[RMDB]
Structure probing data (2A3 and DMS) for a 177-nucleotide construct. Reactivities are given for positions 27 through 126. The DMS profile rests on 23,456 reads.

RNA sequence: GGGAACGACUCGAGUAGAGUCGAAAAUUUCUUUAGACUUUGAUCACCUUGCCUCCUGUCUGCACACCCAUAUCUUCUACUUAGUUUCUUGAGAAACUGCUAAAUUGUUUGCCAAAGUCACUGGAUCUACAUCUUGAUAAUUCGUUAUCAAGAUGUAAAAAGAAACAACAACAACAAC
Reactivity to 2A3 in 0.01 (KOAc 150mM, MgCl2 10mM, bicine 150mM(pH8.5), 24C), signal-to-noise 6, nucleotides 027 to 126: u010u020u040c010u050u080u060a080g010a080c020u060u020u120g050a060u130c020a030c020c020u040u100g030c000c010u000c000c010u020g030u020c020u020g000c030a020c010a020c030c020c000a030u050a060u070c020u100u020c010u040a100c020u060u020a030g020u050u030u030c020u060u220g060a200g050a160a060a030c030u040g030c020u050a090a150a150u160u090g050u060u050u060g040c010c010a070a020a020g030u050c020a020c110u040g030g010a030u030c000
Reactivity to DMS in 0.01 (KOAc 150mM, MgCl2 10mM, bicine 150mM(pH8.5), 24C), signal-to-noise 9, nucleotides 027 to 126: u000u000u000c020u000u000u000a150g010a070c040u000u000u000g000a100u010c080a090c060c050u010u000g000c040c010u000c020c020u000g010u000c030u000g010c070a070c090a120c060c010c020a070u000a050u000c050u000u000c050u000a070c090u000u010a040g010u000u000u000c010u000u000g010a200g010a040a030a040c030u000g010c120u010a050a060a110u010u000g010u000u000u000g010c070c030a040a060a070g010u000c060a080c090u000g000g000a120u010c090
Reactivities are rounded to 0.1 and cut off at 0 and 3.